An RNA of 177 nucleotides, treated with DMS and 2A3 and read out base by base. DMS adducts were read by reverse transcription with MarathonRT. Conditions: 150 mM KOAc, 10 mM MgCl2 and 150 mM bicine (pH 8.5), 24 C. The 2A3 profile rests on 1,864 reads.
[RMDB]
RNA sequence: GGGAACGACUCGAGUAGAGUCGAAAAAGGGUGAUCCACUCGGAGUUGGACGGGAAAAGCACAUCCAGAGGACCCCUUCGACGAACAGAAGGAUCUGGUACCGGGGAGGAAUAGCCCAUAGUACAAGCUGUAUUAUUCCGUUCGCGGAAUAAUACAGAAAAGAAACAACAACAACAAC
Reactivity to DMS in 0.01 (KOAc 150mM, MgCl2 10mM, bicine 150mM(pH8.5), 24C), signal-to-noise 2, nucleotides 027 to 126: a090g020g010g000u000g020a210u000c010c030a130c010u000c040g000g000a170g000u020u000g000g000a050c110g010g020g000a080a040a150a130g000c120a110c100a110u000c000c020a020g000a190g000g000a120c080c090c020c010u020u000c010g020a120c140g020a110a070c110a080g000a020a040g010g040a220u000c010u010g000g010u010a150c030c000g000g000g000g010a120g030g000a030a060u010a300g000c000c010c030a040u000a060g040u000a080c110a110a100g000
Reactivity to 2A3 in 0.01 (KOAc 150mM, MgCl2 10mM, bicine 150mM(pH8.5), 24C), signal-to-noise 2, nucleotides 027 to 126: a020g020g020g000u060g000a050u000c000c000a030c010u020c020g010g010a100g140u120u080g010g070a030c060g060g030g030a060a170a030a030g060c040a050c000a110u030c010c000a020g030a030g030g060a080c090c050c030c000u000u010c000g060a070c010g090a180a080c010a110g010a000a000g030g000a040u000c020u020g000g030u030a050c020c020g000g000g010g020a230g050g000a040a020u070a160g000c020c010c040a020u070a000g040u040a040c050a070a030g010